[RMDB]
RNA sequence: GGGAACGACUCGAGUAGAGUCGAAAAGGAUAAUGAUAACUGCAUAAGCCACCUGAUUGAUCUGGAAUUGGAUGCAACUUUUACUACAGGAAUUGACAUAAGGAUUUAGACCCUUUUCCAGUACAUUGACCUAGUAGUAUUAACAGGACUGUGGCAACGAUUAUGAGGGUUUCGACCCUCAUAAUCGAAAAGAAACAACAACAACAAC
Reactivity to 2A3 in 0.01 (KOAc 150mM, MgCl2 10mM, bicine 150mM(pH8.5), 24C), signal-to-noise 4, nucleotides 027 to 156: g080g010a040u130a210a050u150g080a080u140a220a050c050u100g010c070a040u040a120a050g010c000c000a010c010c020u060g040a150u030u100g020a030u050c030u070g040g070a140a100u080u090g030g040a040u020g030c000a070a050c020u050u100u090u070a040c010u010a010c000a000g020g030a080a100u070u060g020a020c040a070u130a030a110g000g000a030u010u050u090a090g090a140c000c010c000u030u020u010u060c060c020a040g010u070a070c020a060u060u090g110a090c000c010u000a060g000u000a000g000u010a030u100u050a100a080c040a020g010g070a020c030u060g020u050g080g000c030a020a030
Reactivity to DMS in 0.01 (KOAc 150mM, MgCl2 10mM, bicine 150mM(pH8.5), 24C), signal-to-noise 3, nucleotides 027 to 156: g000g010a080u000a050a060u000g010a130u010a070a130c020u000g000c020a140u010a050a090g000c030c010a030c010c020u010g030a070u000u000g010a090u010c140u000g010g020a070a040u000u000g010g010a070u020g020c040a050a070c040u010u000u030u000a090c030u000a050c030a060g000g000a100a130u000u000g030a170c080a120u000a070a110g040g010a080u000u000u000a130g010a140c050c000c010u010u000u000u010c040c030a210g020u000a070c080a130u000u000g000a150c020c030u000a090g030u000a030g000u000a050u020u000a050a080c040a040g010g000a120c120u000g020u000g010g010c000a070a100
Record summary:
Structure probing data (2A3 and DMS) for a 207-nucleotide construct. As a SHAPE reagent, 2A3 marks flexible, mostly unpaired nucleotides at the ribose 2'-OH. Conditions: 150 mM KOAc, 10 mM MgCl2 and 150 mM bicine (pH 8.5), 24 C. It was measured as part of the RMDB library OK3TST. In probing experiments dimethyl sulfate is read out at A N1 and C N3, which are open when not base-paired. DMS adducts were read by reverse transcription with MarathonRT.